Chemical mapping of a 177-nucleotide RNA with 2A3 and DMS. The 2A3 profile rests on 1,821 reads. 2A3 adducts were read by reverse transcription with SuperScript II with manganese. The RNA was probed in 150 mM KOAc, 10 mM MgCl2 and 150 mM bicine (pH 8.5) at 24 C.
RNA sequence: GGGAACGACUCGAGUAGAGUCGAAAAGUCCGCACGUGACUGGUCAGGGGGAAGGUCUGGACGUUCAGGGUCUUUCAUCUACCAGGUGAGCACUCAUGAACAGUCUGAGUCUGCCCAUGGGCGGACCUCACGUGCAACGAUUCGUCGUUGCACGUGAAAAAGAAACAACAACAACAAC
Reactivity to 2A3 in 0.01 (KOAc 150mM, MgCl2 10mM, bicine 150mM(pH8.5), 24C), signal-to-noise 2, nucleotides 027 to 126: g020u000c010c000g010c010a020c010g030u020g010a040c040u050g030g070u170c270a030g070g000g010g030g010a030a000g060g020u000c020u020g030g060a080c100g050u110u080c060a020g030g000g010u000c000u000u090u000c010a000u010c010u020a070c050c010a000g080g000u040g030a060g000c020a000c010u020c030a130u120g040a090a080c050a240g100u000c040u020g050a010g020u000c060u090g020c010c000c000a020u030g010g020g010c050g000g000a000c030c000
Reactivity to DMS in 0.01 (KOAc 150mM, MgCl2 10mM, bicine 150mM(pH8.5), 24C), signal-to-noise 2, nucleotides 027 to 126: g000u000c010c000g060c050a050c040g020u000g020a090c070u010g000g010u010c120a040g010g000g000g010g010a070a030g000g010u000c020u000g010g010a090c210g000u010u010c060a110g010g010g010u000c020u000u010u000c010a010u000c030u000a120c100c100a040g000g020u000g000a060g020c230a070c000u000c010a060u010g020a060a130c130a140g010u000c020u000g010a070g000u000c070u000g010c020c010c010a030u010g000g010g040c010g000g000a030c020c090